RNA sequence: GGGAACGACUCGAGUAGAGUCGAAAAAACCCGAAGCAACUUCAGGCCGCCGCGCACGAACUGGCGCUCGAUCUCCGCCUCGCUCGAGCAGGCUUCCCCGGGGAUCCCUCUUCGAGCCCUUGCCACCCUACAGGCAAGUCACGUAGUGUAUUCCCCACUGUACUAUUAUGUUCGCAUAAUAGUACAGAAAAGAAACAACAACAACAAC
Reactivity to DMS in 0.01 (KOAc 150mM, MgCl2 10mM, bicine 150mM(pH8.5), 24C), signal-to-noise 1, nucleotides 027 to 156: a060a070c040c010c010g010a060a160g040c020a100a050c050u010u000c020a120g030g050c050c030g050c080c020g020c060g060c080a140c030g050a110a100c040u000g060g010c020g050c040u000c030g000a200u010c000u020c040c000g010c040c010u000c030g050c080u000c000g020a100g010c020a120g060g010c050u010u020c000c000c010c200g000g000g070g000a100u010c060c010c010u000c070u000u000c080g000a140g000c140c170c010u000u010g010c020c000a090c120c040c020u000a090c020a070g030g040c000a020a030g010u020c030a150c010g000u000a050g030u000g000u000a140u000u020c000c000c010c010a300
Reactivity to 2A3 in 0.01 (KOAc 150mM, MgCl2 10mM, bicine 150mM(pH8.5), 24C), signal-to-noise 3, nucleotides 027 to 156: a000a000c010c000c000g040a060a030g060c090a090a070c050u110u080c040a030g010g060c020c020g070c030c020g050c030g050c030a050c070g140a220a050c070u090g040g000c020g030c030u020c030g160a140u040c050u030c040c010g010c000c000u020c010g010c020u010c010g030a020g040c030a050g180g060c030u000u020c020c000c000c010g000g030g000g000a020u050c050c010c000u040c030u040u060c020g050a070g020c040c030c010u030u000g010c010c010a100c090c010c020u150a090c040a020g000g010c000a020a010g000u050c020a000c160g010u040a030g010u020g010u080a070u080u120c020c000c000c010a030